[RMDB]
RNA sequence: GGGAACGACUCGAGUAGAGUCGAAAAAUUAGUGAUACAUAAUGAAAGCAAUGCAUUCUUUCACAUGGAAAUGGGAAUAUAAUAAAUGUCCUGCAGGUGAUUGGGGCUGUAGCAAUUUUAUUGAAGAGAGUAAACCUGUAUUCGUACAGGUUUACUCAAAAGAAACAACAACAACAAC
Reactivity to DMS in 0.01 (KOAc 150mM, MgCl2 10mM, bicine 150mM(pH8.5), 24C), signal-to-noise 4, nucleotides 027 to 126: a090u010u010a060g040u010g000a130u000a100c110a040u010a070a050u020g010a040a070a180g010c120a050a070u000g000c040a050u020u020c030u000u000u010c010a030c050a040u000g000g000a050a080a090u020g010g000g000a050a050u000a090u020a110a100u010a070a070a070u010g010u020c070c010u010g020c070a040g000g030u000g000a080u010u000g000g000g010g020c020u000g000u010a110g020c050a040a030u000u000u000u020a060u030u010g000a120a090g010a220
Reactivity to 2A3 in 0.01 (KOAc 150mM, MgCl2 10mM, bicine 150mM(pH8.5), 24C), signal-to-noise 3, nucleotides 027 to 126: a010u170u160a040g060u020g030a060u090a090c050a050u110a040a060u160g050a040a070a020g010c050a060a070u180g010c000a070u060u000c000u000u020u010c020a010c030a030u050g000g120a080a090a090u100g000g040g090a050a000u050a000u050a160a100u100a040a080a050u210g010u040c000c000u020g070c030a010g060g050u030g040a070u030u050g040g010g010g010c030u040g050u060a010g000c010a010a030u020u040u060u080a090u120u120g060a060a020g070a010